Conditions: 150 mM KOAc, 10 mM MgCl2 and 150 mM bicine (pH 8.5), 24 C. Structure probing data (2A3 and DMS) for a 177-nucleotide construct. For 2A3, 1,633 sequencing reads were counted. 2A3 is a SHAPE reagent: it acylates the 2'-hydroxyl of flexible nucleotides of all four kinds.
RNA sequence: GGGAACGACUCGAGUAGAGUCGAAAACGCAAGAUGCCGAUUCAGAUGGCCAACGGGGACGAGUCCACGCCCACUGUUCCGGCGGGAGAAGGCGGAGCCGGCGGAUCAUCUUCCAGCGGUUCGGUAGCUAACGGGUCUGAUUCGUCAGACCCGUUAGAAAAGAAACAACAACAACAAC
Reactivity to 2A3 in 0.01 (KOAc 150mM, MgCl2 10mM, bicine 150mM(pH8.5), 24C), signal-to-noise 2, nucleotides 027 to 126: c040g050c030a060a040g090a170u070g000c000c000g020a000u110u070c020a020g060a150u000g000g050c030c010a040a020c000g040g000g010g000a020c010g050a040g110u020c000c010a120c110g000c000c010c030a060c140u040g110u210u060c080c040g010g000c000g000g050g010a170g020a130a070g100g050c070g030g010a020g120c010c010g000g050c000g020g000a050u130c020a030u000c030u060u020c000c020a050g010c030g050g010u060u030c000g000g090u030a080g050
Reactivity to DMS in 0.01 (KOAc 150mM, MgCl2 10mM, bicine 150mM(pH8.5), 24C), signal-to-noise 3, nucleotides 027 to 126: c070g000c050a080a060g020a160u020g000c020c010g000a100u000u010c070a040g010a060u010g010g010c020c010a090a260c030g020g000g000g010a230c040g020a130g010u010c020c050a160c100g010c020c000c060a090c120u010g010u000u010c100c070g000g000c030g000g000g020a120g010a080a100g010g010c000g000g020a300g010c020c010g010g010c180g010g010a060u010c040a040u000c020u000u010c020c020a110g020c040g000g000u000u000c010g010g010u000a090g010